[RMDB]
RNA sequence: GGGAACGACUCGAGUAGAGUCGAAAAUAACAGUGCAUCCACCGCCAGUUGGGCGUGCUCGCUAUGCACUUGCACUUGAUUUUCAUGGUGACUGAUUCGCUCCACAUGGGCAUUGAGGAUAAUAUCGACUCUCAGGUGGUUUCGACCACCUGAGAGUAAAAGAAACAACAACAACAAC
Reactivity to 2A3 in 0.01 (KOAc 150mM, MgCl2 10mM, bicine 150mM(pH8.5), 24C), signal-to-noise 1, nucleotides 027 to 126: u070a010a080c040a030g020u030g000c000a040u050c050c020a040c030c000g040c010c000a040g150u170u190g150g010g000c040g000u020g020c020u000c070g010c010u070a010u040g050c020a000c000u000u090g080c080a100c020u020u080g100a060u060u050u060u070c010a020u050g060g050u000g050a040c010u020g000a230u200u060c080g000c040u080c010c010a060c030a140u110g050g000g000c020a000u090u090g050a090g040g010a040u110a050a080u100a170u080c000g030
Reactivity to DMS in 0.01 (KOAc 150mM, MgCl2 10mM, bicine 150mM(pH8.5), 24C), signal-to-noise 2, nucleotides 027 to 126: u000a060a160c150a020g000u000g000c030a000u000c180c010a100c150c070g040c020c010a220g010u000u000g000g020g010c060g000u010g010c090u000c150g020c120u000a010u000g010c040a020c030u000u000g050c130a090c080u000u000g020a030u000u000u000u000c030a040u000g020g000u000g000a080c120u000g000a190u000u000c070g000c040u000c000c040a110c060a090u010g020g000g000c090a060u000u000g000a070g000g000a150u020a030a070u010a170u000c150g010
The data come from the RNA Mapping Database (RMDB), library OK2TRN. An RNA of 177 nucleotides, treated with 2A3 and DMS and read out base by base. Reactivities are given for positions 27 through 126. The DMS profile rests on 1,007 reads. The RNA was probed in 150 mM KOAc, 10 mM MgCl2 and 150 mM bicine (pH 8.5) at 24 C.